[RMDB]
RNA sequence: GGGAACGACUCGAGUAGAGUCGAAAACAGAUUUCGAGAGGAAUUUGGUAUAUCAAAAGGUAUAAGACGCUCCAAGUACAGAUGGGUCGAACUAAGACGGAGCGCAGGAUCGUUGAGUUAUACGGGAGUAUUCCAGCCAUGCUGGACCAUCGUACAAGACCUUUUAUCAGUUCGCUGAUAAAAGGUCAAAAGAAACAACAACAACAAC
Reactivity to 2A3 in 0.01 (KOAc 150mM, MgCl2 10mM, bicine 150mM(pH8.5), 24C), signal-to-noise 2, nucleotides 027 to 156: c000a000g060a050u000u060u070c050g050a030g000a030g070g050a070a070u060u060u050g030g010u060a050u010a010u200c070a050a060a060a040g140g010u160a160u020a160a050g030a030c000g000c000u000c000c020a090a030g010u000a030c040a090g020a020u030g010g040g020u040c060g050a090a020c090u050a040a030g000a010c060g000g000a010g000c000g000c020a010g020g030a040u080c040g000u030u050g070a030g090u130u080a090u020a070c010g000g020g020a110g040u030a080u030u080c000c010a000g000c080c060a110u260g020c020u010g000g000a000c000c000a010u000c000g000u000a010c020a060a020

Chemical mapping of a 207-nucleotide RNA with 2A3.
The reactions ran in a buffer of 150 mM KOAc, 10 mM MgCl2 and 150 mM bicine (pH 8.5), at 24 C.
For 2A3, 1,094 sequencing reads were counted.